[RMDB]
RNA sequence: GGGAACGACUCGAGUAGAGUCGAAAACGCGAAACACCAGUCACAGACGCUAAAACUCACGCUACGUCAAGACGGAUGUGACAACGCGUAAGCUAGCGCAAGCUUAAGCGAAACGUACGAGUAGCGAAAUUUUAUAAAUAUUCGUAUUUAUAAAAUUAAAAGAAACAACAACAACAAC
Reactivity to 2A3 in 0.01 (KOAc 150mM, MgCl2 10mM, bicine 150mM(pH8.5), 24C), signal-to-noise 9, nucleotides 027 to 126: c050g010c020g050a070a100a010c080a060c050c020a020g010u010c010a010c000a020g050a040c030g010c080u120a080a080a120a070c060u090c040a090c030g010c020u040a010c020g220u080c080a050a020g120a050c010g020g020a030u040g000u010g030a010c020a060a020c020g000c000g010u010a030a020g000c020u070a020g070c030g050c210a070a010g000c000u060u060a060a020g000c010g040a130a100a000c020g010u050a040c060g010a020g040u010a010g010c000g010a000
Reactivity to DMS in 0.01 (KOAc 150mM, MgCl2 10mM, bicine 150mM(pH8.5), 24C), signal-to-noise 5, nucleotides 027 to 126: c070g020c030g000a120a100a100c120a100c070c070a140g020u010c000a030c030a040g000a080c030g020c090u040a030a080a090a100c120u010c090a110c030g010c020u010a010c050g010u010c090a060a110g000a080c020g010g010a060u000g000u000g000a030c010a140a160c010g000c010g010u000a040a060g010c000u010a080g030c140g020c220a100a050g000c000u000u020a030a060g010c030g000a080a110a080c090g010u010a080c140g000a120g000u000a020g000c010g020a180